Notes
The data come from the RNA Mapping Database (RMDB), library ARCHII. Chemical mapping of a 207-nucleotide RNA with DMS and 2A3. Reactivities are given for positions 27 through 156. The RNA was probed in 150 mM KOAc, 10 mM MgCl2 and 150 mM bicine (pH 8.5) at 24 C. For 2A3, 1,770 sequencing reads were counted. Values are in units of 0.01, from 0 to 300, in steps of 10.

[RMDB]
RNA sequence: GGGAACGACUCGAGUAGAGUCGAAAACGGCUUUGAGAUUUCCGUUCUAAGAUUAACUGGGAUACUUCAGUGGAGCAAUCCAGCAGAGAUCCAGUUGCCGUGGGUAUGGCGGUGGGAUAGCAACAAAGUGGUAUAUGUUAUGGAAGGUAUUUGCAAUAUUCUUCUUUAUCUUCGGAUAAAGAAGAAUAAAAGAAACAACAACAACAAC
Reactivity to DMS in 0.01 (KOAc 150mM, MgCl2 10mM, bicine 150mM(pH8.5), 24C), signal-to-noise 1, nucleotides 027 to 156: c040g000g000c030u000u000u020g010a150g030a120u000u000u010c010c010g020u000u000c050u000a130a110g000a130u010u010a090a130c030u010g030g030g000a220u000a030c010u000u040c030a270g000u000g010g020a030g030c010a080a150u010c000c020a020g000c020a080g010a110g010a050u000c010c000a090g010u010u000g010c010c020g030u020g000g020g010u000a020u010g020g020c060g020g040u020g010g000g000a040u000a130g010c060a040a080c030a030a050a060g020u010g000g010u000a100u020a080u010g000u000u010a100u010g010g010a060a100g000g000u000a070u010u010u000g000c040a080a230u000
Reactivity to 2A3 in 0.01 (KOAc 150mM, MgCl2 10mM, bicine 150mM(pH8.5), 24C), signal-to-noise 4, nucleotides 027 to 156: c010g020g020c030u090u110u130g120a120g020a090u100u100u020c070c010g040u090u030c070u130a080a130g000a180u180u080a090a000c020u030g050g070g040a060u120a210c030u050u060c040a060g080u040g020g010a020g000c040a030a080u020c010c010a040g010c010a010g040a000g000a010u020c000c020a010g020u010u030g000c010c010g010u010g010g000g000u090a130u120g080g020c080g050g040u180g070g020g010a070u120a110g050c010a000a070c020a070a130a070g030u030g040g030u040a080u020a020u160g050u090u070a050u070g030g010a030a000g080g020u030a130u030u140u110g020c010a040a030u000